[RMDB]
RNA sequence: GGGAACGACUCGAGUAGAGUCGAAAAAAAAAGAUAUGGACUAACAGAGCUGUUAAGGCGUUUGACGCAAGUCGGAAACGACUUGCCGAGCCUUAGUCAGCGACGAAGUUAGUCCUAAGUCAAAAAACAAUAGCAGCAACUUCGGUUGCUGCUAUUGAAAAGAAACAACAACAACAAC
Reactivity to DMS in 0.01 (KOAc 150mM, MgCl2 10mM, bicine 150mM(pH8.5), 24C), signal-to-noise 2, nucleotides 027 to 126: a050a060a070a290a020g050a020u020a300u000g030g000a010c000u010a000a000c000a020g000a300g010c000u000g000u000u000a010a000g020g010c010g050u000u020u010g020a220c300g000c060a030a020g000u000c000g000g000a170a140a260c010g020a000c000u000u000g010c020c000g000a150g000c000c000u000u010a000g010u000c000a000g000c010g020a070c300g000a040a020g000u000u000a000g000u000c020c000u000a000a060g010u030c020a000a090a110a070a180a100